[RMDB]
RNA sequence: GGGAACGACUCGAGUAGAGUCGAAAAAUUUGAAAGAGGCCGUUCUCCCGGAGAAAGGAAACAUGAAUCCACAAUUGAGUUGUGGUCAGCACCCAGUGAUGACUGUCAGUACUCGACGAUGGUUCCAGUCAUGGUAAUUAUUCGUAAUUACCAUGACAAAAGAAACAACAACAACAAC
Reactivity to DMS in 0.01 (KOAc 150mM, MgCl2 10mM, bicine 150mM(pH8.5), 24C), signal-to-noise 6, nucleotides 027 to 126: a040u010u000u000g000a110a130a120g010a040g000g020c140c020g000u000u010c030u020c000c110c080g040g000a070g010a040a090a090g000g000a080a040a080c090a090u020g000a080a060u020c020c010a010c080a080a060u040u020g000a060g020u000u010g010u010g000g000u010c050a050g000c030a040c030c080c060a060g020u010g000a070u020g010a040c020u000g020u000c050a090g020u020a040c020u000c010g010a030c090g010a160u010g010g000u000u000c010c070a100
Reactivity to 2A3 in 0.01 (KOAc 150mM, MgCl2 10mM, bicine 150mM(pH8.5), 24C), signal-to-noise 9, nucleotides 027 to 126: a000u030u010u020g030a020a020a000g020a010g040g050c160c000g000u010u010c040u070c000c010c020g110g020a100g070a050a070a030g070g020a060a090a030c060a070u140g090a090a050u060c010c010a030c030a070a090u070u170g050a060g110u030u030g020u050g030g010u010c000a010g010c020a020c010c130c060a030g020u040g060a080u080g010a030c010u030g050u190c010a030g070u040a040c000u000c010g020a020c040g060a080u100g070g000u020u020c030c020a020
Structure probing data (DMS and 2A3) for a 177-nucleotide construct. The 2A3 profile rests on 18,249 reads. 2A3 adducts were read by reverse transcription with SuperScript II with manganese. The RNA was probed in 150 mM KOAc, 10 mM MgCl2 and 150 mM bicine (pH 8.5) at 24 C. For DMS, 15,329 sequencing reads were counted. The data come from the RNA Mapping Database (RMDB), library OK1LIB. High DMS reactivity at an A or C suggests that its Watson-Crick edge is free.